[RMDB]
This 177-nucleotide RNA was probed chemically with 2A3 and DMS. For DMS the reverse transcriptase was MarathonRT.
RNA sequence: GGGAACGACUCGAGUAGAGUCGAAAAGAAAGUACAGGCGGGUACGUUGGCAGCGGAGUGCGGCCGCGUUACUUUUGUAACGAGCACUCCGGCCGCUGCCUCCGUCGCCGCCUCGACGGAGGGAAAAGACCGACGAUAAUUUCGAUUAUCGUCGGUCAAAAGAAACAACAACAACAAC
Reactivity to 2A3 in 0.01 (KOAc 150mM, MgCl2 10mM, bicine 150mM(pH8.5), 24C), signal-to-noise 1, nucleotides 027 to 126: g000a020a080a010g020u000a000c000a040g000g010c000g010g010g000u020a040c050g140u070u100g070g030c120a140g170c010g040g030a030g040u020g000c000g010g070c040c040g140c000g020u030u000a010c000u090u280u300u300g010u010a000a020c000g000a010g010c000a010c000u000c010c000g000g020c000c000g010c050u100g110c000c000u020c010c000g000u000c000g000c000c000g000c030c000u000c000g030a000c010g000g020a030g000g000g020a000a120a010a040
Reactivity to DMS in 0.01 (KOAc 150mM, MgCl2 10mM, bicine 150mM(pH8.5), 24C), signal-to-noise 1, nucleotides 027 to 126: g010a140a130a120g000u000a030c010a020g010g000c000g010g000g010u010a030c010g020u010u000g010g030c030a070g010c060g000g000a040g010u010g010c010g030g000c140c170g010c030g000u000u000a000c010u000u000u020u020g010u000a010a010c010g000a190g020c020a020c010u000c050c000g020g010c050c030g010c100u020g000c000c000u000c000c000g020u000c020g000c010c010g000c000c020u000c000g010a040c010g000g000a030g000g010g000a050a100a120a110